RNA sequence: GGGAACGACUCGAGUAGAGUCGAAAAAUCUGGUUCCUCUUAUCUCCUUUGGAAUUUAAGUUGGUCCAGGUAAUGCGCUUAUGUAUGCUUGCACGGCAUUGAUGACCCAGCGGAGUUUCUUGGGUUGAUGCUACGUCAAAUUCGUUUGACGUAGCAUAAAAGAAACAACAACAACAAC
Reactivity to 2A3 in 0.01 (KOAc 150mM, MgCl2 10mM, bicine 150mM(pH8.5), 24C), signal-to-noise 4, nucleotides 027 to 126: a000u030c020u020g000g000u140u280c000c000u000c010u010u010a020u010c040u020c000c020u070u050u280g030g070a090a040u020u050u030a090a000g080u100u050g000g010u000c000c030a010g030g000u020a030a080u080g000c030g000c020u130u070a030u210g110u010a030u100g070c030u030u030g080c060a040c080g020g000c020a040u000u110g070a070u140g030a050c000c000c000a010g010c030g050g090a090g000u020u110u040c020u030u090g100g000g070u020u110g020
Reactivity to DMS in 0.01 (KOAc 150mM, MgCl2 10mM, bicine 150mM(pH8.5), 24C), signal-to-noise 3, nucleotides 027 to 126: a040u020c010u010g000g000u020u020c000c000u000c020u000u000a020u000c020u000c010c020u030u020u030g000g000a050a040u000u010u000a010a010g000u010u000g000g010u000c000c000a010g000g020u000a050a060u020g020c060g020c060u000u020a040u000g000u020a030u010g000c030u010u010g010c120a070c110g000g020c030a010u000u000g000a070u010g000a090c010c000c000a080g010c090g020g010a230g000u000u010u000c030u000u000g010g020g010u020u000g010
Chemical mapping of a 177-nucleotide RNA with 2A3 and DMS. As a SHAPE reagent, 2A3 marks flexible, mostly unpaired nucleotides at the ribose 2'-OH. It was measured as part of the RMDB libraries RFM100 and RFMREP. Conditions: 150 mM KOAc, 10 mM MgCl2 and 150 mM bicine (pH 8.5), 24 C.